[RMDB]
RNA sequence: GGGAACGACUCGAGUAGAGUCGAAAAGGUUGUCAUCGACAACACCCUAUGCAUUCAUGCUCUGUAAGGAUGCGCCGAAAGGUGAGCAAGCCCGAGUUGCCCAGACCUGAAAUGCAACACUUUAGAGAAAACCCGAAGCAGUUCGCUGCUUCGGGAAGAAUCUAUCAAUGUUCGCAUUGAUAGAUUCAAAAGAAACAACAACAACAAC
Reactivity to DMS in 0.01 (KOAc 150mM, MgCl2 10mM, bicine 150mM(pH8.5), 24C), signal-to-noise 2, nucleotides 027 to 156: g000g040u000u000g000u000c030a170u000c100g020a090c000a080a050c020a120c000c010c060u010a110u000g000c030a020u000u000c050a140u010g010c000u010c020u000g010u020a300a180g060g000a060u000g010c000g020c040c040g000a110a140a100g020g010u020g020a060g000c020a140a180g050c060c020c040g030a130g030u000u000g000c000c000c030a100g000a100c060c010u000g000a050a030a100u000g010c050a090a110c060a140c070u000u000u000a080g010a150g000a100a090a030a180c000c010c000g020a050a040g020c020a080g020u000u000c280g000c070u000g030c010u000u000c010g030g000g010a000a000
Reactivity to 2A3 in 0.01 (KOAc 150mM, MgCl2 10mM, bicine 150mM(pH8.5), 24C), signal-to-noise 4, nucleotides 027 to 156: g120g000u010u010g010u010c120a230u210c290g010a000c010a010a010c010a070c000c000c000u050a040u070g000c000a000u000u030c030a040u130g000c010u020c000u010g020u010a030a000g010g000a010u020g000c010g000c010c000g060a100a030a010g030g000u030g020a030g000c030a030a030g030c010c030c020g080a070g070u060u070g070c030c020c030a040g020a080c010c020u050g050a060a060a060u080g030c040a030a050c020a050c110u150u160u190a130g010a020g010a040a090a020a040c010c000c000g000a000a000g020c010a010g020u080u160c140g040c140u000g000c000u000u000c000g000g010g000a010a000
Structure probing data (DMS and 2A3) for a 207-nucleotide construct.
The data come from the RNA Mapping Database (RMDB), library M2RFPK.
Conditions: 150 mM KOAc, 10 mM MgCl2 and 150 mM bicine (pH 8.5), 24 C.
Values are in units of 0.01, from 0 to 300, in steps of 10.